Annotation
Structure probing data (2A3 and DMS) for a 177-nucleotide construct. The data come from the RNA Mapping Database (RMDB), library OK1LIB. The 2A3 profile rests on 2,097 reads. Conditions: 150 mM KOAc, 10 mM MgCl2 and 150 mM bicine (pH 8.5), 24 C.
[RMDB]
RNA sequence: GGGAACGACUCGAGUAGAGUCGAAAAGAAGGGAAAGGAGAACCAUGGACAGUCUCCAGAGGUUCCUAAGGCCUCGGUCGCGCCUGCAGGGAGGCAGAAUGUCCCGGUUGUCCAUGUAAGAAGAAGAAAUUAUCCUGGAGUUCGCUCCAGGAUAAUUAAAAGAAACAACAACAACAAC
Reactivity to 2A3 in 0.01 (KOAc 150mM, MgCl2 10mM, bicine 150mM(pH8.5), 24C), signal-to-noise 3, nucleotides 027 to 126: g070a010a020g080g010g050a130a040a090g040g020a050g010a040a010c030c010a040u100g000g000a000c010a010g020u010c000u000c020c020a030g010a030g020g030u040u150c020c000u070a060a050g040g000c000c000u030c010g000g030u090c060g000c040g030c070c040u070g060c020a030g100g000g010a010g010g000c000a010g090a100a080u140g010u010c000c000c000g020g000u010u010g060u000c010c010a020u060g040u040a040a140g070a030a000g020a030a000g050a040
Reactivity to DMS in 0.01 (KOAc 150mM, MgCl2 10mM, bicine 150mM(pH8.5), 24C), signal-to-noise 5, nucleotides 027 to 126: g000a090a090g000g020g020a060a100a100g000g000a060g000a050a050c050c030a090u020g010g000a020c040a100g000u000c010u000c000c010a110g030a060g010g010u000u010c050c090u040a080a120g000g000c010c010u000c040g010g010u010c080g010c190g010c040c010u000g010c080a110g000g000g030a040g000g000c010a060g000a060a110u030g000u010c000c000c270g010g000u000u000g010u000c020c040a050u020g010u030a060a090g010a080a100g010a100a080g000a120